[RMDB]
The record gives the reactivity of an RNA of 207 nucleotides to 2A3 and DMS. 2A3 is a SHAPE reagent: it acylates the 2'-hydroxyl of flexible nucleotides of all four kinds. For 2A3 the reverse transcriptase was SuperScript II with manganese. For 2A3, 3,184 sequencing reads were counted. In probing experiments dimethyl sulfate is read out at A N1 and C N3, which are open when not base-paired. The RNA was probed in 150 mM KOAc, 10 mM MgCl2 and 150 mM bicine (pH 8.5) at 24 C. DMS adducts were read by reverse transcription with MarathonRT. Reactivities are given for positions 27 through 156.
RNA sequence: GGGAACGACUCGAGUAGAGUCGAAAAAACGCGAUUCAACCUUAAUAGGAUAUGCUAAACACUGCCGUUUGAAGUCUGUUUAGAAGAAACUUAAUCAAGCUAGCAUCAUGUUGGUUGUUUAUCACUUUUCAUGAUGCGAAACUUUUCGAUAAACUACGAGGAGGAAUAUGUUCGCAUAUUCCUCCUCAAAAGAAACAACAACAACAAC
Reactivity to 2A3 in 0.01 (KOAc 150mM, MgCl2 10mM, bicine 150mM(pH8.5), 24C), signal-to-noise 5, nucleotides 027 to 156: a000a000c170g040c090g060a120u180u110c080a050a120c010c030u240u240a130a080u140a270g040g000a050u060a070u150g000c000u010a000a010a000c020a000c010u010g000c000c020g010u000u000u000g020a010a000g000u020c040u010g010u000u000u010a010g000a070a020g050a060a140a030c110u170u120a020a040u050c010a010a000g010c010u010a000g000c000a000u000c000a000u010g010u030u020g010g000u010u020g010u010u000u000a020u040c000a000c000u190u190u050u020c000a000u000g000a000u000g000c000g000a000a000a000c030u050u140u160u180c040g000a000u010a010a030a010c000u050a030c120
Reactivity to DMS in 0.01 (KOAc 150mM, MgCl2 10mM, bicine 150mM(pH8.5), 24C), signal-to-noise 2, nucleotides 027 to 156: a080a120c030g000c040g010a100u010u010c030a050a150c000c010u000u000a070a110u010a100g000g000a170u000a120u010g000c000u010a010a060a050c030a040c040u010g020c000c040g020u000u000u040g000a070a050g010u000c240u000g030u000u000u010a040g000a050a030g020a160a080a080c080u000u000a130a060u010c030a030a010g000c020u000a300g020c010a010u000c010a040u000g000u000u010g020g050u000u000g030u000u010u040a120u020c040a070c010u000u000u000u000c010a010u000g000a050u000g020c010g000a120a050a030c030u000u000u000u010c070g010a080u000a040a030a080c050u010a080c170